[RMDB]
RNA sequence: GGGAACGACUCGAGUAGAGUCGAAAAGGGGUCAUAAGAGAACCGUACAGACAUGCUCGGUGGGACUGAAGCCUCCACGGUCCCACACGAGCAACAGCUGUACUCAGUAUCUUAUGACGGAGGCACCCAAAUGUACUCGACUUCGGUCGAGUACAAAGGUUUAAUAUGGAUUCGUCCAUAUUAAACCAAAAGAAACAACAACAACAAC
Reactivity to DMS in 0.01 (KOAc 150mM, MgCl2 10mM, bicine 150mM(pH8.5), 24C), signal-to-noise 1, nucleotides 027 to 156: g040g000g020g010u000c000a040u000a040a040g010a040g000a200a200c210c300g000u020a060c000a020g000a100c070a260u000g020c000u000c020g060g040u000g000g000g030a070c010u000g000a030a180g020c020c010u000c020c040a300c000g020g020u010c000c000c000a010c000a030c000g030a040g020c000a030a030c120a140g000c000u000g030u000a010c010u010c070a090g000u000a090u000c000u000u000a030u000g000a020c020g010g010a030g050g050c000a090c010c020c040a040a140a090u000g010u010a000c010u000c000g000a000c030u000u010c300g080g010u000c020g000a020g000u000a000c000a020a050a140
Reactivity to 2A3 in 0.01 (KOAc 150mM, MgCl2 10mM, bicine 150mM(pH8.5), 24C), signal-to-noise 2, nucleotides 027 to 156: g120g010g040g000u000c000a000u000a010a000g000a000g000a030a000c010c000g000u000a000c000a000g070a070c100a170u180g000c000u010c000g030g010u000g000g030g000a000c000u000g010a090a020g030c000c010u010c020c000a010c050g010g000u030c040c010c020a000c010a070c000g000a010g010c020a030a000c010a010g010c000u000g000u010a000c010u000c000a000g020u010a010u010c000u000u000a000u010g000a000c000g000g000a000g010g000c000a040c000c000c010a030a130a040u110g000u010a000c000u000c000g000a000c000u030u070c260g090g000u000c000g000a000g000u010a000c000a000a020a000